This 177-nucleotide RNA was probed chemically with DMS and 2A3. Conditions: 150 mM KOAc, 10 mM MgCl2 and 150 mM bicine (pH 8.5), 24 C. 2A3 adducts were read by reverse transcription with SuperScript II with manganese.

RNA sequence: GGGAACGACUCGAGUAGAGUCGAAAAAGGAGCGGCUAGAGAUCAAUAGAUGUGAGGCCAUUGACAAAACUCAGGACCUCCUAGCUGGUCUGCAUGCAAGGAGCAACAAGCAAACAUCAUUGAAUCAGACUAGUACUCGUUUCGACGAGUACUAGUCAAAAGAAACAACAACAACAAC
Reactivity to DMS in 0.01 (KOAc 150mM, MgCl2 10mM, bicine 150mM(pH8.5), 24C), signal-to-noise 2, nucleotides 027 to 126: a080g000g000a040g020c050g010g000c010u000a060g000a180g010a110u000c010a080a140u000a080g010a040u010g020u000g010a050g040g000c000c050a040u000u000g010a040c070a090a050a160a130c300u010c030a030g020g000a050c070c000u000c010c120u000a040g000c010u000g000g000u000c010u000g000c050a010u000g000c050a060a050g000g010a100g020c050a130a040c030a040a070g000c070a100a130a030c040a040u020c060a060u010u000g000a120a050u000c080a130
Reactivity to 2A3 in 0.01 (KOAc 150mM, MgCl2 10mM, bicine 150mM(pH8.5), 24C), signal-to-noise 2, nucleotides 027 to 126: a000g100g000a060g020c020g050g000c020u050a010g000a000g010a090u060c020a010a080u090a150g110a030u040g030u040g030a000g020g000c000c020a040u050u090g020a020c060a040a210a110a060c050u060c040a010g040g010a240c000c010u000c000c000u030a010g000c010u030g070g080u010c020u020g030c040a030u160g000c000a030a060g050g000a070g060c020a010a060c010a030a040g090c030a090a060a030c010a020u090c000a000u040u000g040a050a050u130c040a070